[RMDB]
RNA sequence: GGGAACGACUCGAGUAGAGUCGAAAAGUCACUGCGUGCUUGCUUUCUCUCCCAGGGAAGAUACCCCAGUGCCAUGUCUUGGGGCAAGAGAAAAUGAAGACAGACCUGGAACAUGAACAUGGUGGCCACCCACGGAUUGAUUCGUCAAUCCGUGGGUAAAAGAAACAACAACAACAAC
Reactivity to 2A3 in 0.01 (KOAc 150mM, MgCl2 10mM, bicine 150mM(pH8.5), 24C), signal-to-noise 1, nucleotides 027 to 126: g040u060c050a020c090u170g040c110g080u080g000c020u080u130g030c010u020u080u000c020u000c060u000c060c010c010a020g010g050g000a060a020g030a100u170a130c000c050c000c000a020g000u070g020c060c020a010u020g010u000c000u060u060g010g000g050g000c000a050a020g070a010g100a050a070a020a010u130g030a060a020g030a020c090a030g070a020c000c000u000g030g080a050a060c040a120u110g030a020a020c010a030u050g000g000u010g050g020c000c020
Reactivity to DMS in 0.01 (KOAc 150mM, MgCl2 10mM, bicine 150mM(pH8.5), 24C), signal-to-noise 2, nucleotides 027 to 126: g030u000c030a080c030u000g010c100g030u000g000c060u030u010g020c030u010u000u000c030u000c080u010c030c000c010a160g010g020g000a090a070g010a180u000a180c020c000c000c000a070g000u000g000c000c040a050u020g000u000c000u000u000g030g000g020g000c120a020a100g000a110g000a030a040a070a070u000g000a060a110g000a110c080a090g000a070c000c020u000g010g000a110a080c120a020u000g010a160a080c030a010u000g010g010u010g000g050c100c090
Structure probing data (2A3 and DMS) for a 177-nucleotide construct. The 2A3 profile rests on 911 reads. Conditions: 150 mM KOAc, 10 mM MgCl2 and 150 mM bicine (pH 8.5), 24 C. DMS (dimethyl sulfate) methylates the pairing face of unpaired adenines and cytosines.